[RMDB]
RNA sequence: GGGAACGACUCGAGUAGAGUCGAAAACGCCUUUCCUUUCCAUCUGACUUGCAUAAUUUACGACCGCCUCACUGGCUUCCACUUUUUAUAAAUAAACCAGCGGGGAAAGGGGCACCAUGUCGUAUGCGCAGGACUCGAUGUUCGCAUCGAGUCCUGCAAAAGAAACAACAACAACAAC
Reactivity to 2A3 in 0.01 (KOAc 150mM, MgCl2 10mM, bicine 150mM(pH8.5), 24C), signal-to-noise 2, nucleotides 027 to 126: c050g000c000c000u020u010u000c000c000u000u110u040c030c000a080u030c140u220g250a290c010u040u050g050c000a030u030a120a030u250u090u120a170c120g040a050c010c060g000c000c000u050c000a050c000u020g050g000c000u110u050c010c000a000c000u000u010u000u200u070a100u170a070a100a060u050a060a050a010c010c010a000g040c010g050g000g000g010a010a200a000g020g000g050g030c040a020c000c000a060u040g030u020c110g000u110a060u110g040c000

Overview: This 177-nucleotide RNA was probed chemically with 2A3. For 2A3, 586 sequencing reads were counted.